The record gives the reactivity of an RNA of 207 nucleotides to DMS and 2A3.
DMS adducts were read by reverse transcription with MarathonRT.
For 2A3 the reverse transcriptase was SuperScript II with manganese.
DMS (dimethyl sulfate) methylates the pairing face of unpaired adenines and cytosines.
For DMS, 3,342 sequencing reads were counted.
The reactions ran in a buffer of 150 mM KOAc, 10 mM MgCl2 and 150 mM bicine (pH 8.5), at 24 C.
[RMDB]
RNA sequence: GGGAACGACUCGAGUAGAGUCGAAAAUUGCAGGAGGAAGCAGUUAGCCUCCUUGGAAAUGAGUAAUCUUCACAGAAAGUAUGACAUUUGACCUGCUUCUUGGAGAAGAUGCAUAUUAAACCUAUUAAAUCCAUGUCAGCCUUUAACACCUUUGCUAAUGGUCAAAAUGAUUCGUCAUUUUGACCAUAAAAGAAACAACAACAACAAC
Reactivity to DMS in 0.01 (KOAc 150mM, MgCl2 10mM, bicine 150mM(pH8.5), 24C), signal-to-noise 2, nucleotides 027 to 156: u000u020g000c040a060g010g020a010g020g010a090a050g020c000a140g010u000u010a190g010c010c000u000c010c000u000u010g000g010a090a070a070u010g010a130g020u020a120a050u000c010u000u000c010a090c060a030g000a040a020a040g020u000a050u010g020a060c030a300u010u000u010g020a080c040c030u000g020c000u000u010c000u020u000g030g020a240g020a060a030g010a030u010g010c000a110u000a080u020u000a060a060a120c040c020u000a140u010u010a070a130a130u000c030c000a120u010g010u020c050a030g020c000c000u000u000u020a070a060c050a090c050c000u000u000u000g030c030u020a090
Reactivity to 2A3 in 0.01 (KOAc 150mM, MgCl2 10mM, bicine 150mM(pH8.5), 24C), signal-to-noise 4, nucleotides 027 to 156: u100u090g020c010a010g000g010a000g020g010a040a040g040c070a020g050u080u130a050g010c000c000u010c000c000u000u020g050g040a020a100a060u060g000a000g040u020a050a060u010c000u010u000c010a020c020a040g070a040a040a010g040u040a080u240g120a080c040a090u130u160u170g060a050c010c010u000g020c000u020u000c000u030u100g010g030a190g000a080a020g030a010u020g000c020a040u090a060u190u230a090a060a070c000c000u020a030u080u150a080a110a030u010c020c000a010u030g030u040c020a020g060c000c010u080u130u030a050a030c050a060c040c020u050u060u120g010c030u110a070